About this RNA
This 177-nucleotide RNA was probed chemically with 2A3 and DMS. The reactions ran in a buffer of 150 mM KOAc, 10 mM MgCl2 and 150 mM bicine (pH 8.5), at 24 C. 2A3 adducts were read by reverse transcription with SuperScript II with manganese. As a SHAPE reagent, 2A3 marks flexible, mostly unpaired nucleotides at the ribose 2'-OH. High DMS reactivity at an A or C suggests that its Watson-Crick edge is free.

RNA sequence: GGGAACGACUCGAGUAGAGUCGAAAAGAAGAGAAGUGAGUAAACGCCUAUUCGGUAUAAGCACAGCCCGUCAAAAGGCGUGCGGCGAGGGCACCUGAAGCUGUGCUUAUAACUGGGCCGUCGAAGAAUCAUGCAUAGGAUUCGUCCUAUGCAUGAUAAAAGAAACAACAACAACAAC
Reactivity to 2A3 in 0.01 (KOAc 150mM, MgCl2 10mM, bicine 150mM(pH8.5), 24C), signal-to-noise 9, nucleotides 027 to 126: g100a030a010g100a010g030a140a030g080u110g090a020g010u130a040a090a010c020g010c000c010u090a130u100u210c070g020g000u010a010u000a010a000g000c000a000c010a010g000c010c030c050g100u090c050a090a100a070a020g090g030c100g030u020g010c000g020g010c090g050a130g030g080g000c020a020c010c030u050g030a040a010g000c010u000g010u010g000c000u010u000a010u010a030a050c020u050g010g020g010c070c030g030u040c030g020a100a040g040a070
Reactivity to DMS in 0.01 (KOAc 150mM, MgCl2 10mM, bicine 150mM(pH8.5), 24C), signal-to-noise 9, nucleotides 027 to 126: g000a070a060g000a060g000a070a080g010u010g010a080g000u010a040a090a070c090g000c010c010u010a090u030u020c120g000g010u000a010u000a000a010g010c000a010c000a010g010c010c080c100g010u020c180a070a070a130a090g000g020c130g010u010g010c030g010g010c100g000a090g000g000g000c010a030c010c010u000g010a140a130g010c010u000g010u000g000c000u010u000a000u000a020a040c040u010g000g000g000c030c050g010u000c040g000a090a110g010a110
Source: RMDB library OK1LIB, as collected in RNAgym.